[RMDB]
RNA sequence: GGGAACGACUCGAGUAGAGUCGAAAAGGGAGCUAGGAGCGUGGGGGACCCAGUGGAGCCAUGGGAUGCUUCUCCCGAUUCCCUCCAACCCCACUCCCAGAAGGGUCGCCCAGGAAUGGCGGGACCCGCUUAAUCGAAGGUUCGCCUUCGAUUAAGCAAAAGAAACAACAACAACAAC
Reactivity to DMS in 0.01 (KOAc 150mM, MgCl2 10mM, bicine 150mM(pH8.5), 24C), signal-to-noise 3, nucleotides 027 to 126: g010g000g020a170g010c250u000a060g000g010a070g000c140g020u000g030g010g000g010g010a270c030c010c000a050g020u020g010g000a060g010c070c070a200u000g010g000g010a180u020g010c070u000u000c040u000c020c010c030g020a190u000u000c040c030c000u000c110c120a050a110c020c030c010c020a100c050u010c000c000c000a150g000a120a110g000g000g010u000c000g000c010c010c010a030g000g010a090a130u010g010g000c130g000g000g000a020c030c010c020
Reactivity to 2A3 in 0.01 (KOAc 150mM, MgCl2 10mM, bicine 150mM(pH8.5), 24C), signal-to-noise 2, nucleotides 027 to 126: g030g030g010a060g030c190u210a110g100g000a080g030c060g060u090g000g000g000g000g000a020c010c000c010a020g030u100g040g070a060g020c050c080a120u060g040g000g030a060u120g060c030u050u030c010u050c000c000c010g030a040u050u030c000c000c020u000c000c010a060a070c010c010c010c000a030c000u000c030c020c020a050g080a200a140g000g020g000u010c030g150c050c000c000a000g030g080a160a050u050g000g020c090g010g030g010a010c000c010c000
Structure probing data (DMS and 2A3) for a 177-nucleotide construct. For DMS the reverse transcriptase was MarathonRT. The data come from the RNA Mapping Database (RMDB), library VIROID.